[RMDB]
RNA sequence: GGGAACGACUCGAGUAGAGUCGAAAAGUUACGGGUGCAGGUGGUUCAAUAGGAUCAGAAAUUUGUAGACAAGUUUGUAAUUUCUAUCCAGAACGUAUUAUUCUACUUGGCCAUGGUGAAAACAGUACACUAUUAACACAUUCGUGUGUUAAUAGUGAAAAGAAACAACAACAACAAC
Reactivity to DMS in 0.01 (KOAc 150mM, MgCl2 10mM, bicine 150mM(pH8.5), 24C), signal-to-noise 6, nucleotides 027 to 126: g020u020u010a060c050g010g000g020u000g010c030a040g010g020u000g010g010u000u000c030a050a070u010a140g010g010a020u000c190a020g000a010a030a010u000u010u020g010u020a130g010a080c120a090a140g010u010u010u020g010u010a030a020u000u000u000c000u000a060u000c020c020a140g000a050a090c230g030u020a040u010u010a070u010u010c040u000a020c030u010u000g000g020c020c010a060u020g020g000u010g010a070a040a040a080c100a080g000u020a160
Reactivity to 2A3 in 0.01 (KOAc 150mM, MgCl2 10mM, bicine 150mM(pH8.5), 24C), signal-to-noise 8, nucleotides 027 to 126: g040u060u090a050c070g040g010g000u070g140c010a020g030g030u050g010g010u010u040c040a090a050u070a240g010g000a010u020c070a040g020a010a020a010u080u090u110g180u160a070g040a150c070a140a070g080u090u210u140g060u130a040a020u000u000u000c000u010a010u000c020c010a020g040a070a020c040g020u050a080u130u040a060u100u060c050u050a020c010u010u040g010g000c020c020a070u100g040g030u070g070a080a100a020a020c020a020g080u060a020